[RMDB]
RNA sequence: GGGAACGACUCGAGUAGAGUCGAAAAGGUAUUGUAACGAUGUGUGCACCAAUGGGUGGCAAAACUGAAGGUGCCAUUUAUGAAGGCUUUUUAGAGUAUGCACGUAAUUUUAAAAAGUAUGAAGGUACGUGACAGAGUGAUUCGUCACUCUGUCACGAAAAGAAACAACAACAACAAC
Reactivity to 2A3 in 0.01 (KOAc 150mM, MgCl2 10mM, bicine 150mM(pH8.5), 24C), signal-to-noise 2, nucleotides 027 to 126: g060g000u090a030u190u200g210u210a000a090c090g050a200u140g000u000g090u170g050c030a020c030c070a000a040u300g060g000g000u030g120g030c080a000a160a000a000c060u080g030a110a000g020g090u150g050c030c000a020u000u000u130a170u200g140a080a000g000g000c000u000u010u000u030u060a030g000a000g080u160a010u050g040c030a000c080g030u000a070a300u040u000u060u070a020a030a000a000a000g010u020a040u200g080a130a060g060g040u290a010
Reactivity to DMS in 0.01 (KOAc 150mM, MgCl2 10mM, bicine 150mM(pH8.5), 24C), signal-to-noise 1, nucleotides 027 to 126: g030g000u000a120u000u000g020u000a060a030c170g060a150u000g030u000g010u010g000c020a110c020c020a110a140u000g000g010g060u000g000g000c140a050a050a020a030c110u010g020a100a080g010g000u000g000c030c000a100u000u010u060a080u000g020a060a080g000g000c000u000u010u000u010u000a010g040a010g010u000a080u000g000c130a020c110g030u030a040a000u030u000u000u000a000a000a000a000a000g000u000a030u040g000a100a020g030g050u000a100

An RNA of 177 nucleotides, treated with 2A3 and DMS and read out base by base. DMS adducts were read by reverse transcription with MarathonRT. 2A3 adducts were read by reverse transcription with SuperScript II with manganese. The data come from the RNA Mapping Database (RMDB), library OK1LIB.